[RMDB]
RNA sequence: GGGAACGACUCGAGUAGAGUCGAAAAAGGGGCUGGGGAAGUCACAGAGCUCUACAAAAGUAGACCUGCCUUUAGCUAGCCACAGAUCUACUUCUCAGAUCUUACCAUCAAUGUCAGUGUCUAUAUGCCCCAGUUCAACAGAAGUUCUGAAAGCAUAAUUUAGGAUAUAUUUCGAUAUAUCCUAAAUAAAAGAAACAACAACAACAAC
Reactivity to 2A3 in 0.01 (KOAc 150mM, MgCl2 10mM, bicine 150mM(pH8.5), 24C), signal-to-noise 4, nucleotides 027 to 156: a000g030g000g000g000c020u010g000g010g020g010a050a030g040u060c040a010c040a100g110a050g020c060u040c040u090a080c060a070a260a030a010g000u000a000g000a000c010c010u010g040c020c010u080u110u060a080g050c080u030a010g020c050c020a030c020a010g010a010u000c020u040a050c080u210u080c070u020c080a010g000a040u010c000u000u080a060c030c060a100u120c060a050a100u110g060u120c020a010g030u020g010u120c030u040a120u010a030u280g040c000c000c000c000a000g000u010u020c020a010a000c020a030g150a140a010g040u100u040c020u100g070a120a050a020g070c050a060u110a180
Reactivity to DMS in 0.01 (KOAc 150mM, MgCl2 10mM, bicine 150mM(pH8.5), 24C), signal-to-noise 4, nucleotides 027 to 156: a150g010g000g020g010c030u000g010g010g010g020a070a110g030u000c070a100c110a110g000a300g000c070u000c020u000a120c080a060a080a050a090g020u000a020g020a010c010c010u000g000c030c090u000u000u000a170g020c090u010a100g020c030c220a040c100a040g000a010u000c010u000a030c030u000u010c050u000c050a140g010a040u000c020u000u000a150c060c050a140u000c060a080a100u000g020u000c050a100g020u000g010u000c020u000a130u000a090u010g000c010c010c010c010a070g020u000u000c020a030a170c060a090g010a090a110g000u000u000c020u000g000a090a070a080g000c030a060u010a070